[RMDB]
RNA sequence: GGGAACGACUCGAGUAGAGUCGAAAACGCAGCGGUUUGGGUACGACGAUGCGGCCAGCCGCAUCCACAACAGCCUUCAUGGGAAUACGAUACCAAUGGCUUCCCACUCAGGUGCGGAAGUCGACUCAGCCCUUAGAGAGUUCGCUCUCUAAGGGCUAAAAGAAACAACAACAACAAC
Reactivity to 2A3 in 0.01 (KOAc 150mM, MgCl2 10mM, bicine 150mM(pH8.5), 24C), signal-to-noise 4, nucleotides 027 to 126: c090g000c020a000g050c040g010g030u060u070u120g050g000g020u080a080c060g070a050c050g020a080u040g040c020g030g010c010c020a080g110c000c000g000c000a020u030c000c040a070c000a220a000c020a020g020c000c000u100u110c080a140u170g080g000g100a050a080u250a100c020g080a050u110a140c020c030a110a150u120g000g000c030u000u000c000c030c010a000c010u080c080a110g080g110u030g030c090g010g010a000a020g010u030c020g030a050c030u020c070
Reactivity to DMS in 0.01 (KOAc 150mM, MgCl2 10mM, bicine 150mM(pH8.5), 24C), signal-to-noise 1, nucleotides 027 to 126: c130g020c090a060g070c070g000g000u000u040u030g000g000g000u000a060c110g000a160c130g000a060u000g000c010g050g000c020c060a120g040c000c060g000c000a060u020c000c200a060c200a000a130c250a120g000c040c010u010u000c090a080u050g010g050g000a170a030u050a050c100g020a150u000a090c060c040a030a000u110g000g000c060u000u000c000c000c000a020c000u000c230a060g010g020u020g000c110g050g000a000a010g000u000c030g010a050c200u000c120

This 177-nucleotide RNA was probed chemically with 2A3 and DMS. Source: RMDB library OK1LIB, as collected in RNAgym. Reactivities are given for positions 27 through 126. The RNA was probed in 150 mM KOAc, 10 mM MgCl2 and 150 mM bicine (pH 8.5) at 24 C. 2A3 adducts were read by reverse transcription with SuperScript II with manganese.